[RMDB]
RNA sequence: GGGAACGACUCGAGUAGAGUCGAAAAGGUCGGCAUCGAGCAGACGACCGAACACUUGAGCGCACCUUGCGGAGCUCUUGUGGAUUAGGAGCUUGACGACGAUGUUCGCAUUCGUCUUGCUCCGAAAGGCUUGCUUCUCGUUCGCGAGGAGCAAGCCAAAAGAAACAACAACAACAAC
Reactivity to 2A3 in 0.01 (KOAc 150mM, MgCl2 10mM, bicine 150mM(pH8.5), 24C), signal-to-noise 4, nucleotides 027 to 126: g020g000u020c010g010g070c040a090u110c230g070a050g020c030a030g040a090c000g000a010c000c000g020a060a000c020a000c020u010u010g000a000g000c160g030c070a180c010c020u090u200g050c140g090g020a020g000c000u000c000u020u020g000u000g000g020a030u020u130a060g000g000a020g000c000u010u030g000a000c010g010a040c110g090a060u050g090u070u120c180g010c120a070u060u070c010g000u000c000u000u030g020c000u000c000c000g010a000a000a000
Reactivity to DMS in 0.01 (KOAc 150mM, MgCl2 10mM, bicine 150mM(pH8.5), 24C), signal-to-noise 2, nucleotides 027 to 126: g000g000u010c000g000g000c090a110u030c130g020a150g000c050a090g020a300c020g020a050c000c000g000a110a150c050a020c030u020u000g010a020g010c030g010c220a140c010c020u000u010g020c150g010g010a300g000c000u000c000u000u060g000u000g000g000a040u060u000a070g020g000a030g000c040u050u000g020a020c010g000a060c300g000a010u040g000u030u080c100g000c080a030u000u000c000g020u000c000u000u000g000c000u020c000c000g000a020a020a100